[RMDB]
RNA sequence: GGGAACGACUCGAGUAGAGUCGAAAAUGAGCGACUUACACGACUUGUGUCGGAAGCGUCGGCGACCCCGGAGUAUUGAGCUCCACAUGAGACGUGAGGUCCGCCGAAGUGCCAUAGUGGGCACUAGCGCGGAUAGAUGCUUCGGCAUCUAUCCGCGAAAAGAAACAACAACAACAAC
Reactivity to DMS in 0.01 (KOAc 150mM, MgCl2 10mM, bicine 150mM(pH8.5), 24C), signal-to-noise 1, nucleotides 027 to 126: u000g000a170g020c000g000a110c000u000u010a070c000a000c050g000a120c030u050u000g000u000g010u000c070g000g000a030a170g000c000g000u010c050g000g000c170g000a240c200c040c000c030g000g000a180g000u010a200u000u000g000a120g000c000u000c000c000a100c000a000u000g000a040g030a060c000g000u000g000a060g010g020u000c030c020g060c020c000g000a300a000g000u000g010c000c000a230u020a100g000u040g000g000g000c000a000c010u000a060g000
Reactivity to 2A3 in 0.01 (KOAc 150mM, MgCl2 10mM, bicine 150mM(pH8.5), 24C), signal-to-noise 4, nucleotides 027 to 126: u100g010a050g010c010g000a000c020u030u160a130c030a000c030g040a010c000u020u010g020u010g010u050c140g000g000a070a010g000c010g060u030c000g030g020c070g030a040c010c000c000c000g060g030a040g050u210a120u210u240g100a040g020c000u020c000c010a010c000a020u040g010a000g000a000c000g000u020g000a020g030g000u040c100c030g000c000c010g000a050a000g010u010g000c000c010a050u090a100g110u130g050g010g020c010a000c000u010a050g040